Notes:
The record gives the reactivity of an RNA of 177 nucleotides to 2A3 and DMS. The RNA was probed in 150 mM KOAc, 10 mM MgCl2 and 150 mM bicine (pH 8.5) at 24 C. For DMS, 8,762 sequencing reads were counted. It was measured as part of the RMDB library OK2TST. Reactivities are given for positions 27 through 126.

[RMDB]
RNA sequence: GGGAACGACUCGAGUAGAGUCGAAAAUAAUAAUGUAACGAGCAAACGGCUUUUGUGGAACCCAUUCACCCCUUCACAAACUGAGGGAGGCGCGGCGUCCGCGUCCACAAGCGGUACGAGUGGUAACCCUGGUAGUAAAUUUCGAUUUACUACCAGGAAAAGAAACAACAACAACAAC
Reactivity to 2A3 in 0.01 (KOAc 150mM, MgCl2 10mM, bicine 150mM(pH8.5), 24C), signal-to-noise 5, nucleotides 027 to 126: u140a020a030u110a060a060u090g040u080a080a060c050g010a050g080c030a120a060a080c030g080g010c020u040u050u060u060g030u020g020g020a060a060c000c030c000a030u130u090c020a080c020c000c010c010u030u050c050a070c080a150a290a110c080u060g000a030g020g010g010a060g040g000c040g000c020g070g000c030g080u050c050c010g010c000g010u000c010c000a040c010a010a040g000c020g040g010u030a020c010g010a020g030u020g050g050u060a040a030c020
Reactivity to DMS in 0.01 (KOAc 150mM, MgCl2 10mM, bicine 150mM(pH8.5), 24C), signal-to-noise 7, nucleotides 027 to 126: u000a100a090u010a090a100u010g010u010a090a080c070g010a110g000c040a050a090a100c100g000g000c030u000u000u000u000g020u000g000g000a070a140c050c020c020a120u010u000c090a120c040c010c010c010u000u000c040a030c120a080a070a130c260u010g000a050g000g000g010a080g010g010c060g010c090g000g010c170g010u010c040c020g010c030g000u000c020c040a020c060a050a060g010c060g010g020u000a040c060g000a080g010u000g000g000u000a090a120c200